[RMDB]
RNA sequence: GGGAACGACUCGAGUAGAGUCGAAAACGACGCGGCCCAGCUGUCGAGCUUGGCCGACGAAACUCCGGAGGGCCGCUCGAUCGUCGUGCUGGCGAAGGACGAGUUCGGGCUGCGCGCCCGCGACGAGCCUGCCUGAUCAUUUCGAUGAUCAGGCAGGAAAAGAAACAACAACAACAAC
Reactivity to 2A3 in 0.01 (KOAc 150mM, MgCl2 10mM, bicine 150mM(pH8.5), 24C), signal-to-noise 2, nucleotides 027 to 126: c010g300a040c010g020c010g010g030c000c000c000a000g030c020u070g060u110c030g030a030g000c070u280u300g060g000c010c030g040a000c000g000a000a010a000c050u150c130c020g110g030a150g070g040g090c020c010g000c010u010c030g020a060u000c000g090u030c010g040u090g090c090u110g000g090c060g110a110a080g110g020a030c030g120a020g030u050u130c120g080g000g000c000u030g020c000g000c000g070c000c000c000g010c020g060a080c040g000a010g050
Reactivity to DMS in 0.01 (KOAc 150mM, MgCl2 10mM, bicine 150mM(pH8.5), 24C), signal-to-noise 2, nucleotides 027 to 126: c090g000a160c060g010c010g000g000c010c020c010a030g000c020u000g030u000c060g000a100g020c010u000u000g040g010c020c010g000a030c000g020a090a100a090c120u000c120c020g030g000a230g010g010g030c060c030g000c040u000c020g000a120u000c050g000u020c000g020u000g010c080u000g010g000c050g010a130a120g000g000a030c080g000a090g000u000u000c130g030g000g030c000u010g000c030g000c070g050c020c020c030g030c090g010a070c060g000a090g000